An RNA of 177 nucleotides, treated with DMS and read out base by base. Values cover nucleotides 27 to 126. For DMS, 905 sequencing reads were counted. The RNA was probed in 150 mM KOAc, 10 mM MgCl2 and 150 mM bicine (pH 8.5) at 24 C.

[RMDB]
RNA sequence: GGGAACGACUCGAGUAGAGUCGAAAAGUGGAGCGCGGCGCGGAGCUCCUUCGUUCGCUCGACGACUUUCUGGCCGAGCACGCCGAAACCCCGGUCUCGGGCACCGGCUGGGACGGCGAAACGACGGAAUGCUUCGCAUGUUCGCAUGCGAAGCAUUAAAAGAAACAACAACAACAAC
Reactivity to DMS in 0.01 (KOAc 150mM, MgCl2 10mM, bicine 150mM(pH8.5), 24C), signal-to-noise 1, nucleotides 027 to 126: g020u000g020g000a110g010c040g030c070g000g000c030g000c000g000g000a150g000c060u000c010c000u010u000c000g010u040u000c140g030c030u000c010g040a030c020g000a140c200u000u000u010c080u010g060g000c000c010g020a080g030c030a300c040g010c000c000g010a070a130a160c050c060c020c080g020g000u000c020u000c120g030g010g000c220a010c090c010g040g040c020u000g010g020g010a210c000g000g000c000g010a070a040a050c020g000a050c050g000g000